[RMDB]
RNA sequence: GGGAACGACUCGAGUAGAGUCGAAAACAAAAAGGUUAACGAGCGUAAUCUGGGAGAUGUAAAAGGAGUUGACAUCUCCUAGAACACCGAAAGGUGGCGGGCCGUUAACUGCAUCUUUCGAAAGAAAAGUCCUAGUAUCAUUCGUGAUACUAGGACUAAAAGAAACAACAACAACAAC
Reactivity to 2A3 in 0.01 (KOAc 150mM, MgCl2 10mM, bicine 150mM(pH8.5), 24C), signal-to-noise 4, nucleotides 027 to 126: c060a000a080a000a000a010g030g000u020u000a010a000c010g020a100g130c090g080u100a040a200u020c000u000g000g000g000a010g000a000u010g000u030a000a100a070a150g220g060a180g060u150u170g100a000c000a000u000c000u000c000c000u000a000g010a000a010c000a010c000c010g050a050a020a030g000g010u010g030g000c070g030g120g000c020c000g010u000u010a000a000c000u010g010c010a080u020c060u010u070u060c090g100a060a060a040g080a020a100a050
Reactivity to DMS in 0.01 (KOAc 150mM, MgCl2 10mM, bicine 150mM(pH8.5), 24C), signal-to-noise 4, nucleotides 027 to 126: c070a040a070a020a120a060g000g020u000u010a010a000c000g030a150g030c000g000u030a100a130u000c000u000g000g000g030a010g000a000u010g000u000a040a090a070a060g000g030a200g000u020u010g000a080c010a010u000c000u000c000c000u010a000g000a030a250c020a010c010c000g020a180a090a150g010g030u000g020g000c300g010g010g000c000c000g000u000u010a010a010c000u000g000c210a060u050c080u000u000u000c030g000a060a040a130g010a040a060a100